Conditions: 150 mM KOAc, 10 mM MgCl2 and 150 mM bicine (pH 8.5), 24 C. The record gives the reactivity of an RNA of 207 nucleotides to DMS and 2A3.

RNA sequence: GGGAACGACUCGAGUAGAGUCGAAAAGAUCUGCGCCGAUCCGAACCGCUAGCAAACAGCCCGCAUCAUGUCGUCUCCUAACUUCGACGUGGUGAAAUACUGAGCUUAUGCGAGUAAGCCUGUUAGCAAUAGAUCAGAACGUUCGCGUUCUGAUCAAGCCUAAGUUUAGGUUCGCCUAAACUUAGGCAAAAGAAACAACAACAACAAC
Reactivity to DMS in 0.01 (KOAc 150mM, MgCl2 10mM, bicine 150mM(pH8.5), 24C), signal-to-noise 2, nucleotides 027 to 156: g000a080u010c050u000g030c050g020c040c030g000a080u000c010c040g000a120a110c070c030g000c020u010a080g000c030a040a090a150c100a160g040c020c020c050g010c030a010u010c010a030u010g000u010c020g020u000c090u020c060c070u010a100a110c080u000u000c030g010a050c010g110u030g000g010u020g010a060a080a140u010a060c030u000g000a060g000c010u020u000a140u000g000c220g000a180g030u000a070a070g010c010c050u000g010u000u000a120g030c050a070a080u000a100g000a020u000c000a000g010a010a020c000g040u000u000c300g010c040g020u000u000c000u000g010a000u000c000a050a140
Reactivity to 2A3 in 0.01 (KOAc 150mM, MgCl2 10mM, bicine 150mM(pH8.5), 24C), signal-to-noise 5, nucleotides 027 to 156: g020a050u020c030u120g060c050g010c070c050g010a040u010c020c020g020a050a040c000c030g000c020u020a010g000c040a060a040a120c020a060g050c010c000c020g010c010a010u000c000a000u030g000u010c000g020u000c070u090c070c080u140a160a200c060u050u020c010g000a010c000g000u010g020g000u020g020a030a010a010u180a010c050u020g030a010g020c000u030u010a020u100g090c050g020a020g050u020a010a000g000c000c020u050g030u080u080a030g030c050a090a110u040a240g010a000u000c010a000g000a000a000c010g020u070u060c080g000c000g130u010u000c030u000g000a000u000c000a000a000